[RMDB]
RNA sequence: GGGAACGACUCGAGUAGAGUCGAAAAUAUUAGGCUGCAGCUUGGGAGGCGGCUCUCCCCAGGCGGCGUCCGCGGAGACACCCAUCCGUGAACCCCAGGUCCCGGGCCGCCGGCUCGCCGCGAUAAACAAUCUUUCUUCGUUCGCGAAGAAAGAUUGAAAAGAAACAACAACAACAAC
Reactivity to DMS in 0.01 (KOAc 150mM, MgCl2 10mM, bicine 150mM(pH8.5), 24C), signal-to-noise 1, nucleotides 027 to 126: u010a080u000u010a170g000g000c020u000g060c050a030g010c040u010u030g010g020g010a220g020g000c010g020g000c040u000c040u000c100c030c000c100a150g000g020c050g040g000c090g020u000c020c010g000c020g040g020a070g000a140c190a130c030c100c070a110u000c010c010g010u000g000a050a080c010c010c020c010a200g020g000u000c000c070c050g050g010g010c020c020g010c020c010g000g000c010u000c050g010c020c000g000c070g050a030u010a040a080a230